Conditions: 150 mM KOAc, 10 mM MgCl2 and 150 mM bicine (pH 8.5), 24 C. The record gives the reactivity of an RNA of 177 nucleotides to DMS and 2A3. For DMS the reverse transcriptase was MarathonRT. High DMS reactivity at an A or C suggests that its Watson-Crick edge is free. It was measured as part of the RMDB library OK2TRN.
RNA sequence: GGGAACGACUCGAGUAGAGUCGAAAACUGUAAGGUCUCCAUACCAGAUUGAUGGAGGAAGUAGCCAGUCUCACCUCCACACUAGGUAGUAGUCCACUAUUAGAUGUCACCCUUGACUGGAACACCAAGAUAGAGGGUAGUUCGCUACCCUCUAUCUAAAAGAAACAACAACAACAAC
Reactivity to DMS in 0.01 (KOAc 150mM, MgCl2 10mM, bicine 150mM(pH8.5), 24C), signal-to-noise 4, nucleotides 027 to 126: c030u010g000u020a120a130g010g000u000c020u010c090c060a110u000a060c050c030a060g000a130u010u010g010a130u000g000g000a020g010g030a110a070g010u010a060g000c090c130a140g000u000c020u020c140a160c010c000u000c010c010a040c030a060c080u000a060g020g000u000a030g010u000a060g010u000c080c050a100c090u000a040u000u010a080g000a060u010g000u000c050a080c040c020c030u000u000g010a060c050u000g000g020a100a030c140a070c090c090a090
Reactivity to 2A3 in 0.01 (KOAc 150mM, MgCl2 10mM, bicine 150mM(pH8.5), 24C), signal-to-noise 3, nucleotides 027 to 126: c040u040g050u180a150a020g010g010u000c010u010c030c020a060u030a060c000c000a060g060a230u100u150g100a170u080g060g010a010g020g010a050a000g030u110a020g090c020c030a020g060u000c010u000c020a140c000c000u000c040c000a000c000a010c030u070a080g000g040u010a020g020u010a020g030u050c030c000a040c030u060a050u080u090a030g090a180u090g060u070c040a090c020c010c000u060u110g050a040c060u000g000g060a060a020c060a010c070c060a060